[RMDB]
RNA sequence: GGGAACGACUCGAGUAGAGUCGAAAAGACACGACGGAGACGUCGUGUCAAAGAGUGGGAAACCACUCAAAGAGCCACAGCUUCGGCUGUGGCUCAAGGCGCGGCGCAGUCCGCGGAACAAACGAAAGAUAUCCAUUAAUUUCGAUUAAUGGAUAUCAAAAGAAACAACAACAACAAC
Reactivity to DMS in 0.01 (KOAc 150mM, MgCl2 10mM, bicine 150mM(pH8.5), 24C), signal-to-noise 5, nucleotides 027 to 126: g010a020c010a000c000g010a020c000g020g000a260g020a230c000g030u000c000g020u000g000u000c000a030a050a110g010a010g030u000g000g010g000a140a130a250c000c000a000c000u000c000a030a110a100g010a030g010c000c010a010c010a020g000c020u000u010c270g020g010c010u000g040u000g020g000c010u000c010a010a040g000g000c030g020c010g010g000c000g010c160a090g000u010c010c000g020c000g000g000a060a120c180a040a040a080c120g010a090a120a100
Reactivity to 2A3 in 0.01 (KOAc 150mM, MgCl2 10mM, bicine 150mM(pH8.5), 24C), signal-to-noise 4, nucleotides 027 to 126: g000a010c000a000c010g010a000c010g020g010a050g030a060c010g000u000c000g000u000g000u000c000a000a000a000g010a000g000u010g000g000g010a020a050a090c000c010a000c000u000c000a020a040a000g010a000g000c010c010a020c020a010g040c000u120u140c300g110g000c000u010g000u010g010g010c010u000c000a010a000g010g000c000g000c010g010g000c080g000c150a080g030u040c010c000g000c010g000g010a030a030c070a070a060a010c050g100a060a050a030
The data come from the RNA Mapping Database (RMDB), library OK2TRN. Chemical mapping of a 177-nucleotide RNA with DMS and 2A3. The reactions ran in a buffer of 150 mM KOAc, 10 mM MgCl2 and 150 mM bicine (pH 8.5), at 24 C. The DMS profile rests on 6,283 reads. 2A3 adducts were read by reverse transcription with SuperScript II with manganese.